[RMDB]
Annotation:
An RNA of 177 nucleotides, treated with DMS and 2A3 and read out base by base. DMS adducts were read by reverse transcription with MarathonRT. Conditions: 150 mM KOAc, 10 mM MgCl2 and 150 mM bicine (pH 8.5), 24 C. The DMS profile rests on 732 reads. The data come from the RNA Mapping Database (RMDB), library OK2TRN. For 2A3, 1,403 sequencing reads were counted. Reactivities are given for positions 27 through 126. 2A3 adducts were read by reverse transcription with SuperScript II with manganese.

RNA sequence: GGGAACGACUCGAGUAGAGUCGAAAACGGAUGACCUCAGGCAACUUCAACUUCUUACAGAGACUAAGAGUGGUUGCAGAUGCGCUUUACAGGGAGGGCGCUCUGACACCGAGGAUCCUGACAUCCCCAACUCGGUAGGCUUCGGCCUACCGAGUUGAAAAGAAACAACAACAACAAC
Reactivity to DMS in 0.01 (KOAc 150mM, MgCl2 10mM, bicine 150mM(pH8.5), 24C), signal-to-noise 1, nucleotides 027 to 126: c190g000g030a050u000g000a090c050c010u000c010a040g000g030c090a060a140c010u000u010c140a040a070c010u060u010c010u000u000a050c180a240g050a150g020a150c260u040a010a050g000a030g020u000g020g020u010u000g020c000a010g000a040u010g010c010g010c010u010u020u030a090c120a140g000g000g020a100g040g000g010c000g020c010u000c020u000g000a190c140a190c030c020g000a040g040g000a080u000c030c000u000g010a080c300a190u000c000c010c010
Reactivity to 2A3 in 0.01 (KOAc 150mM, MgCl2 10mM, bicine 150mM(pH8.5), 24C), signal-to-noise 2, nucleotides 027 to 126: c000g000g000a020u020g250a100c000c020u010c070a090g020g000c040a000a020c010u060u060c030a090a080c080u120u110c130u070u020a040c050a070g300a130g030a300c060u030a020a000g020a000g080u040g010g020u050u010g030c020a000g010a040u170g030c010g020c010u070u090u130a110c070a060g030g020g080a050g000g000g000c000g020c010u000c000u030g120a100c010a030c060c020g000a020g000g000a020u040c010c000u000g010a010c000a090u050c000c000c000